An RNA of 177 nucleotides, treated with DMS and 2A3 and read out base by base. The data come from the RNA Mapping Database (RMDB), library TTRDES. The 2A3 profile rests on 8,407 reads. Conditions: 150 mM KOAc, 10 mM MgCl2 and 150 mM bicine (pH 8.5), 24 C. Values cover nucleotides 27 to 126.

RNA sequence: GGGAACGACUCGAGUAGAGUCGAAAAGAUAUGGAUGCUCAAGACAUGAACUCUCUUCGGAAACGAAGAACGUGAGUUCAACAGCUUGGCAUCCUAAGUCAAACUUCGCCUCUUCGGAGGCGAAGAACGAUAAAAUUACCUUCGGGUAAUUUUAUCGAAAAGAAACAACAACAACAAC
Reactivity to DMS in 0.01 (KOAc 150mM, MgCl2 10mM, bicine 150mM(pH8.5), 24C), signal-to-noise 4, nucleotides 027 to 126: g000a030u000a300u010g010g000a000u000g010c020u020c010a000a000g000a070c120a300u000g000a000a010c000u000c000u000c000u000u000c010g020g000a100a060a210c000g010a020a000g020a060a100c290g020u010g010a030g010u010u010c000a050a090c290a120g010c000u000u000g000g010c000a010u000c000c000u000a000a120g010u010c010a160a200a210c020u000u000c000g010c000c000u000c000u010u020c210g040g000a000g010g000c000g000a010a000g000a030a110
Reactivity to 2A3 in 0.01 (KOAc 150mM, MgCl2 10mM, bicine 150mM(pH8.5), 24C), signal-to-noise 4, nucleotides 027 to 126: g030a010u030a020u110g010g000a000u000g010c090u090c300a000a050g010a190c080a300u300g010a010a000c010u020c000u000c020u010u000c000g010g030a060a060a050c010g010a010a010g020a030a010c180g300u180g050a010g000u030u000c000a000a010c010a020g030c000u010u000g000g000c010a000u000c000c000u010a030a000g010u020c030a040a080a100c000u000u000c000g000c010c020u030c000u050u070c300g160g000a000g000g000c000g000a000a000g000a000a000